[RMDB]
RNA sequence: GGGAACGACUCGAGUAGAGUCGAAAACACCGGUGAAACUGAUGAGCUGACGCACCGCGAUGCCAUCGGCGAGGUGGUCCAUCGCCUCGUUGAUAUCGUCCAACCGAAUCGUUGACGUCACCAGCGACCGCUAUUCAUAAUUCGUUAUGAAUAGCGGAAAAGAAACAACAACAACAAC
Reactivity to DMS in 0.01 (KOAc 150mM, MgCl2 10mM, bicine 150mM(pH8.5), 24C), signal-to-noise 5, nucleotides 027 to 126: c110a130c070c040g000g020u000g000a070a080a120c070u020g000a110u020g000a100g010c050u000g000a060c070g010c020a040c060c050g010c060g000a040u010g010c120c110a040u000c010g020g000c010g010a030g000g030u010g000g010u040c140c160a130u040c020g000c000c010u000c010g010u000u000g020a020u010a060u000c050g020u020c050c060a110a090c070c090g010a080a070u010c020g000u010u000g020a130c040g000u010c010a040c040c020a020g010c030g000a180
Reactivity to 2A3 in 0.01 (KOAc 150mM, MgCl2 10mM, bicine 150mM(pH8.5), 24C), signal-to-noise 9, nucleotides 027 to 126: c080a040c020c020g020g030u080g030a130a120a070c080u100g040a130u090g040a170g060c100u030g030a020c020g000c020a030c020c020g010c030g020a020u050g060c040c040a010u000c000g010g000c010g000a000g000g010u020g010g060u100c070c050a200u220c010g000c000c000u000c000g000u000u020g020a020u010a010u040c020g020u020c050c020a060a060c060c050g080a060a050u050c030g010u010u040g020a040c010g020u020c010a010c020c010a020g020c010g030a010
This 177-nucleotide RNA was probed chemically with DMS and 2A3.